RNA sequence: GGGAACGACUCGAGUAGAGUCGAAAAACUAAUCCAAAGCAAGUAUAAGAGAACAGGUUUUUAACUAUUUUUAGGCAGAUAAAAAAUAGUAUUUGACAGUCUAACACUAACUGAACAAUAAGUGUUAAAAAGUCGUCUCUGUUCGCAGAGACGACAACUCGUUGUGAAUGUUCGCAUUCACAACGAGAAAAGAAACAACAACAACAAC
Reactivity to 2A3 in 0.01 (KOAc 150mM, MgCl2 10mM, bicine 150mM(pH8.5), 24C), signal-to-noise 1, nucleotides 027 to 156: a000c070u100a160a020u030c040c020a020a040a020g010c010a010a010g030u030a070u100a200a020g050a000g010a100a060c110a270g090g000u030u030u000u040u020a000a000c000u000a000u020u020u000u020u040a020g110g000c050a030g050a200u200a010a090a000a000a000a020u010a010g010u000a040u020u030u020g030a020c000a000g030u020c000u000a000a000c000a000c010u000a000a000c000u010g020a030a010c010a050a000u010a010a010g000u000g010u030u030a030a130a000a050a000g000u000c000g000u020c000u010c000u000g120u180u120c260g000c050a000g000a000g000a000c010g000a000c000a000a030